This 177-nucleotide RNA was probed chemically with 2A3 and DMS.
RNA sequence: GGGAACGACUCGAGUAGAGUCGAAAAAGCUGCACUAAAUCGGCGGAAAGGACCCCGCUAUCGGGAGUGGCUAGCAGCGAGGGUUGCCGCUCCAGCCGCGCUAUGAAGCAGACAUAGCAGAUUUACACCUAUUACGACGGUUCGCCGUCGUAAUAGGAAAAGAAACAACAACAACAAC
Reactivity to 2A3 in 0.01 (KOAc 150mM, MgCl2 10mM, bicine 150mM(pH8.5), 24C), signal-to-noise 2, nucleotides 027 to 126: a040g030c010u000g010c040a020c170u230a110a230a070u090c050g000g000c050g020g030a030a100a070g110g010a030c000c000c010c010g000c010u100a080u160c080g090g030g040a050g100u100g050g060c020u030a040g000c030a010g000c000g000a270g060g080g020u070u130g070c010c000g000c020u000c000c040a060g000c020c040g000c020g000c000u000a000u010g030a090a010g080c010a010g000a030c010a000u010a010g010c050a010g040a040u150u100u110a070c070a030
Reactivity to DMS in 0.01 (KOAc 150mM, MgCl2 10mM, bicine 150mM(pH8.5), 24C), signal-to-noise 2, nucleotides 027 to 126: a140g050c020u010g000c030a250c220u010a040a090a040u010c070g000g000c010g020g020a100a170a150g020g010a140c050c040c000c010g000c050u020a030u000c100g020g000g000a060g020u000g010g020c030u000a080g000c190a050g000c020g050a080g030g000g030u020u000g030c020c000g030c110u000c000c010a010g010c030c020g010c300g010c000u000a010u000g010a100a090g020c070a060g000a150c010a020u000a010g030c010a170g000a090u020u000u000a080c230a170
DMS adducts were read by reverse transcription with MarathonRT. Values cover nucleotides 27 to 126. The RNA was probed in 150 mM KOAc, 10 mM MgCl2 and 150 mM bicine (pH 8.5) at 24 C.